An RNA of 177 nucleotides, treated with DMS and 2A3 and read out base by base. The reactions ran in a buffer of 150 mM KOAc, 10 mM MgCl2 and 150 mM bicine (pH 8.5), at 24 C. For 2A3 the reverse transcriptase was SuperScript II with manganese.
RNA sequence: GGGAACGACUCGAGUAGAGUCGAAAACUUACGUGGUUCGCCACGUAAGAAAGUGGAAGAGGAGCGAUGAACCCACACAAAACAAGACAUCGAAAAAUUAAAAAACACGCUGCUUCGGCAGCGUGAACCCUAGUAUACUGUUCGCAGUAUACUAGGGAAAAGAAACAACAACAACAAC
Reactivity to DMS in 0.01 (KOAc 150mM, MgCl2 10mM, bicine 150mM(pH8.5), 24C), signal-to-noise 4, nucleotides 027 to 126: c000u000u000a000c000g010u000g010g010u000u020c210g020c000c000a010c000g010u000a000a000g010a030a050a110g000u000g000g010a100a120g000a120g020g010a050g000c020g000a010u010g000a130a080c080c010c010a030c060a080c070a050a040a090a060c100a080a070g010a080c030a020u000c030g000a070a060a070a090a120u000u020a010a050a070a110a070a100c010a010c000g010c010u000g000c000u000u020c200g020g020c000a010g010c000g020u000g000a010a060
Reactivity to 2A3 in 0.01 (KOAc 150mM, MgCl2 10mM, bicine 150mM(pH8.5), 24C), signal-to-noise 5, nucleotides 027 to 126: c000u000u000a000c010g000u000g010g030u030u050c070g040c060c000a000c010g000u000a000a000g000a000a030a010g040u040g030g030a090a050g030a100g140g090a070g090c030g010a020u020g010a050a090c000c030c000a010c010a000c020a030a100a020a010c040a040a030g080a040c010a020u050c040g060a100a020a030a030a070u190u210a080a140a020a030a010a000c000a000c020g000c010u010g000c020u040u050c250g090g000c000a000g000c000g000u000g000a000a000